[RMDB]
RNA sequence: GGGAACGACUCGAGUAGAGUCGAAAAAGGAAGAUUCGUCUUCCUAAAAAAGCGUACUACCAGAGGGAUUGGCUAGAACGAUUCCCAAAUAGGAAUCGGUUCUUGGACCCAAUCCUACCCACCUGGUAUCGCAAAAAGUGUUGCUUCGGCAACACAAGAUGCGAGUGUAUUUCGAUACACUCGCAUCAAAAGAAACAACAACAACAAC
Reactivity to DMS in 0.01 (KOAc 150mM, MgCl2 10mM, bicine 150mM(pH8.5), 24C), signal-to-noise 2, nucleotides 027 to 156: a040g060g000a000a000g010a050u000u010c230g020u000c000u000u000c010c000u000a000a010a070a130a030a110g020c000g030u000a050c130u000a030c000c000a010g000a200g000g000g000a020u000u000g000g020c010u000a020g030a010a040c000g000a040u000u000c000c000c000a040a120a170u020a010g020g020a040a000u000c000g040g000u010u000c020u000u000g030g020a090c300c020c010a000a020u000c020c000u010a020c040c010c030a300c090c000u010g000g000u000a000u000c010g000c010a100a010a080a130a070g040u000g000u000u000g000c010u000u020c300g050g000c000a030a020c010a000c020a010a120
Reactivity to 2A3 in 0.01 (KOAc 150mM, MgCl2 10mM, bicine 150mM(pH8.5), 24C), signal-to-noise 3, nucleotides 027 to 156: a000g000g000a000a010g000a000u070u080c100g080u020c020u010u040c000c000u040a070a080a000a000a000a020g030c040g030u100a100c040u020a000c010c010a000g010a030g020g000g030a010u000u000g020g020c010u010a010g000a000a000c000g000a000u000u010c030c010c030a110a150a100u230a040g000g010a010a000u010c050g170g040u030u000c030u040u070g080g110a150c000c000c000a000a000u000c000c000u000a010c020c020c010a060c000c000u000g010g000u020a040u240c020g000c030a020a020a050a040a030g010u000g000u000u000g000c000u040u080c250g110g000c000a000a000c000a010c000a010a040